[RMDB]
RNA sequence: GGGAACGACUCGAGUAGAGUCGAAAAGCGUCAGCCCCCAUACAUGGUCUUACGACUUUGCGGAGACCUGUGUUUUUGGUAAACAGUCGCCCGGGCCUGGUCACUGCGACCCCCUUUGUGAGGAGGCUAAGCCGUUUCUUUUCGAAGAAACGGCUUAAAAAGAAACAACAACAACAAC
Reactivity to 2A3 in 0.01 (KOAc 150mM, MgCl2 10mM, bicine 150mM(pH8.5), 24C), signal-to-noise 4, nucleotides 027 to 126: g040c020g050u050c040a070g000c000c010c000c010c000a030u020a060c030a050u170g000g010u010c000u030u110a250c060g050a190c080u200u180u300g120c010g030g000a020g010a010c000c010u010g000u010g010u010u120u020u060u100g050g010u080a070a100a020c040a040g050u040c020g020c010c000c000g030g030g010c010c000u030g050g020u020c000a050c090u070g020c000g060a080c000c010c030c000c010u060u080u050g090u060g020a130g040g010a020g000g050c050
Reactivity to DMS in 0.01 (KOAc 150mM, MgCl2 10mM, bicine 150mM(pH8.5), 24C), signal-to-noise 3, nucleotides 027 to 126: g000c050g020u010c070a080g010c020c010c010c000c010a090u020a040c030a060u020g010g010u000c010u000u050a090c030g020a170c130u010u030u070g010c020g000g000a040g000a000c000c000u030g010u020g000u010u020u000u020u010g000g010u020a060a050a130c060a020g000u020c080g000c010c040c020g010g010g000c040c030u000g000g010u000c040a110c110u020g030c030g000a120c040c010c010c000c020u000u000u000g010u020g000a090g010g000a080g000g000c140
Overview
An RNA of 177 nucleotides, treated with 2A3 and DMS and read out base by base. For 2A3 the reverse transcriptase was SuperScript II with manganese. The reactions ran in a buffer of 150 mM KOAc, 10 mM MgCl2 and 150 mM bicine (pH 8.5), at 24 C. Source: RMDB library OK1LIB, as collected in RNAgym. The DMS profile rests on 5,553 reads.